[RMDB]
RNA sequence: GGGAACGACUCGAGUAGAGUCGAAAAGCGGGAUGUGGGUGCAGAGUGGGAAAAUCUGAGUUCGGUCAUCUUUGUUGUUCGUCCUACCGCAGUAUAUUCCUAAACACUAUGAAAUGACCCUAGUUGGCCCAAUUGGAUUAUUCGUAAUCCAAUUGGGAAAAGAAACAACAACAACAAC
Reactivity to 2A3 in 0.01 (KOAc 150mM, MgCl2 10mM, bicine 150mM(pH8.5), 24C), signal-to-noise 4, nucleotides 027 to 126: g070c060g000g030g060a050u070g040u110g060g010g020u050g070c050a010g060a030g060u140g020g030g070a020a040a000a040u070c020u030g010a010g060u070u070c010g010g040u010c000a000u020c020u020u020u060g020u020u050g010u030u030c000g000u010c010c000u020a040c010c000g030c000a000g000u020a030u010a030u100u030c010c000u020a060a100a000c120a010c070u120a110u150g100a040a050a040u100g030a070c010c000c000u020a040g040u030u100g070g000
Reactivity to DMS in 0.01 (KOAc 150mM, MgCl2 10mM, bicine 150mM(pH8.5), 24C), signal-to-noise 3, nucleotides 027 to 126: g010c080g010g010g020a090u020g020u030g000g000g000u020g010c070a050g010a070g020u000g010g020g020a060a020a070a040u020c020u010g000a070g000u010u000c040g010g010u000c040a080u010c050u000u020u020g020u000u010g000u000u010c030g010u010c030c010u000a140c060c030g010c020a060g020u010a080u020a120u000u000c020c000u000a040a070a080c090a050c090u020a070u020g000a050a040a050u000g000a140c030c020c010u010a050g000u010u010g010g010

An RNA of 177 nucleotides, treated with 2A3 and DMS and read out base by base.
Values cover nucleotides 27 to 126.
2A3 adducts were read by reverse transcription with SuperScript II with manganese.